[RMDB]
RNA sequence: GGGAACGACUCGAGUAGAGUCGAAAACUUCGGCUCCAGCAAUCACUAGGGGAUGCCUGUAAACCCGAACUGAUUGUCAUACAGAACAGGAUCGUCGCGUAGCACGUUGUGGGCGAAGUGACUAAAACUUACACAACUCAUCCAAAGCACCCUGCCCCUAUCAGUAAAGGUUCGCCUUUACUGAUAGAAAAGAAACAACAACAACAAC
Reactivity to DMS in 0.01 (KOAc 150mM, MgCl2 10mM, bicine 150mM(pH8.5), 24C), signal-to-noise 2, nucleotides 027 to 156: c070u000u000c040g000g020c010u030c010c020a110g000c060a040a060u010c010a030c050u020a300g030g000g000g030a210u000g000c080c060u010g000u000a070a080a270c010c020c010g000a130a120c140u010g000a060u000u000g050u010c070a090u000a150c080a080g000a070a090c050a100g030g010a020u000c070g010u000c040g060c050g050u010a210g020c000a060c060g000u010u000g030u000g000g000g000c030g020a070a130g010u000g000a130c050u010a050a050a080a060c040u000u010a080c080a050c020a040a080c010u010c030a060u000c030c010a040a080a060g010c050a040c020c020c050u000g050c010c020c060
Reactivity to 2A3 in 0.01 (KOAc 150mM, MgCl2 10mM, bicine 150mM(pH8.5), 24C), signal-to-noise 4, nucleotides 027 to 156: c050u090u070c040g060g000c010u020c010c020a030g020c020a010a010u040c010a020c050u070a050g020g000g010g010a040u100g050c010c030u020g040u070a150a160a070c000c010c000g000a020a020c010u020g010a020u040u000g050u090c020a030u110a200c090a040g140a120a020c000a040g010g020a060u060c020g020u030c010g000c030g070u080a020g000c020a010c060g020u020u020g000u050g020g000g000c030g050a070a000g000u000g030a000c010u020a010a020a030a030c060u150u190a030c030a000c000a030a050c020u050c050a080u030c020c050a060a050a030g020c010a070c020c010c020u030g020c020c010c000